An RNA of 177 nucleotides, treated with DMS and 2A3 and read out base by base. For DMS the reverse transcriptase was MarathonRT. Values cover nucleotides 27 to 126. The reactions ran in a buffer of 150 mM KOAc, 10 mM MgCl2 and 150 mM bicine (pH 8.5), at 24 C.
[RMDB]
RNA sequence: GGGAACGACUCGAGUAGAGUCGAAAAUCCACGCGAUCGUACCUAGUGGAUCCAUGCUACACUCUAUCAUGGGAUCGUACUGAUGAUCCGAUCCUACAUGCUGUAUCGUCUAGGCAGCGUGGAUCUGCUAAACCGAUGCCUUCGGGCAUCGGUUUAGAAAAGAAACAACAACAACAAC
Reactivity to DMS in 0.01 (KOAc 150mM, MgCl2 10mM, bicine 150mM(pH8.5), 24C), signal-to-noise 2, nucleotides 027 to 126: u010c010c010a100c080g010c030g020a090u010c180g030u000a090c040c000u000a020g020u000g030g010a010u000c030c000a010u010g010c020u010a090c080a120c120u010c160u020a080u000c070a050u000g010g010g000a020u000c010g010u020a090c110u000g020a180u010g010a180u000c040c000g010a000u000c000c020u000a080c110a070u000g010c200u000g010u010a040u000c080g000u000c070u020a070g020g030c060a020g000c040g020u000g000g000a000u000c030u000g010
Reactivity to 2A3 in 0.01 (KOAc 150mM, MgCl2 10mM, bicine 150mM(pH8.5), 24C), signal-to-noise 2, nucleotides 027 to 126: u020c000c010a000c010g030c050g050a130u100c040g020u110a050c020c020u000a020g000u030g220g000a000u000c030c000a070u080g010c000u040a100c110a040c110u120c060u100a150u180c030a120u100g020g000g020a000u000c000g010u020a040c060u120g250a250u170g030a080u100c060c010g010a010u000c000c000u100a120c030a030u080g000c010u010g060u140a060u120c060g090u040c160u040a010g020g000c020a030g000c020g010u000g010g020a010u000c020u010g000